An RNA of 207 nucleotides, treated with DMS and 2A3 and read out base by base. The data come from the RNA Mapping Database (RMDB), library OK3TST.
[RMDB]
RNA sequence: GGGAACGACUCGAGUAGAGUCGAAAAACAGUUCGGUUCGGAUCUCAUUGAGAUUGCUCGUGUCUAUCGUGCGAAUCACGUAGAAAUUACCAUCGACCUCGGACACGUAGCGAAUGACAGCGGGCAGCGGAUGAUCGGCGUUGGUCCGUUUGGCGUAGUAACCGAUCAUAUUCGUAUGAUCGGUUACAAAAGAAACAACAACAACAAC
Reactivity to DMS in 0.01 (KOAc 150mM, MgCl2 10mM, bicine 150mM(pH8.5), 24C), signal-to-noise 2, nucleotides 027 to 156: a010c090a130g030u010u010c040g040g030u000u000c050g010g010a080u000c020u010c020a150u010u010g020a180g000a090u010u000g010c030u000c000g020u010g050u000c010u010a090u010c050g040u030g010c050g010a130a120u000c070a050c070g030u000a050g010a100a070a130u010u000a070c020c020a150u000c040g010a050c030c040u010c070g010g010a080c020a060c080g030u000a040g010c000g020a030a110u000g000a050c090a120g020c010g000g030g010c000a120g000c020g020g000a070u000g010a130u000c050g000g020c040g070u010u010g030g020u000c050c010g010u000u010u010g020g000c140g000u000a250
Reactivity to 2A3 in 0.01 (KOAc 150mM, MgCl2 10mM, bicine 150mM(pH8.5), 24C), signal-to-noise 4, nucleotides 027 to 156: a000c050a030g050u050u040c020g000g010u060u060c030g070g000a050u000c030u000c030a160u130u260g040a060g020a100u070u070g000c010u010c020g060u050g010u000c010u020a090u080c020g000u030g060c090g100a090a120u200c050a020c080g020u090a030g080a040a150a050u220u130a090c070c030a110u100c050g050a070c010c030u080c090g000g000a010c010a000c070g080u110a030g030c030g050a040a020u100g020a020c020a050g020c010g000g000g020c000a010g010c000g050g020a050u060g020a020u070c050g030g020c000g040u040u050g080g010u010c010c020g000u020u060u080g020g000c020g040u070a050
Record summary:
The RNA was probed in 150 mM KOAc, 10 mM MgCl2 and 150 mM bicine (pH 8.5) at 24 C. For 2A3 the reverse transcriptase was SuperScript II with manganese.